[RMDB]
RNA sequence: GGGAACGACUCGAGUAGAGUCGAAAAGUUCCAGAAGGGAGAGGAGCCCGCCAAGGCGCGCAAGAGAGCGGGCUGCCUCGCAGUCCGAGCCGGAGAGGGAGCGCGAGCCGCGCCGGCCCCGGACGGGACGUGAAUAAUGCUUCGGCAUUAUUCACGUAAAAGAAACAACAACAACAAC
Reactivity to DMS in 0.01 (KOAc 150mM, MgCl2 10mM, bicine 150mM(pH8.5), 24C), signal-to-noise 4, nucleotides 027 to 126: g000u010u000c000c000a100g020a230a170g020g000g000a260g010a030g010g000a080g000c000c000c010g010c010c030a150a160g010g000c030g010c040g000c020a120a120g000a110g010a170g010c020g000g000g010c000u000g020c000c020u010c040g000c120a110g000u000c000c000g000a280g000c010c000g020g000a080g010a080g000g010g000a110g010c010g020c070g000a140g010c070c020g020c070g000c000c020g000g000c000c040c070c030g010g000a090c040g000g000g010
Reactivity to 2A3 in 0.01 (KOAc 150mM, MgCl2 10mM, bicine 150mM(pH8.5), 24C), signal-to-noise 4, nucleotides 027 to 126: g020u030u030c010c000a030g100a090a080g060g020g020a130g000a010g010g000a010g000c000c000c000g000c000c030a090a020g130g020c050g000c030g010c080a110a060g160a010g000a010g140c010g000g000g000c010u060g090c000c000u000c000g000c020a000g010u000c000c000g010a000g000c000c020g010g030a090g050a110g060g100g040a130g010c010g000c030g040a100g080c030c020g080c040g020c010c000g020g000c000c010c040c010g000g000a010c000g000g020g010

Annotation:
This 177-nucleotide RNA was probed chemically with DMS and 2A3. Conditions: 150 mM KOAc, 10 mM MgCl2 and 150 mM bicine (pH 8.5), 24 C. Source: RMDB libraries RFM100 and RFMREP, as collected in RNAgym. The 2A3 profile rests on 3,330 reads. High DMS reactivity at an A or C suggests that its Watson-Crick edge is free. Values cover nucleotides 27 to 126.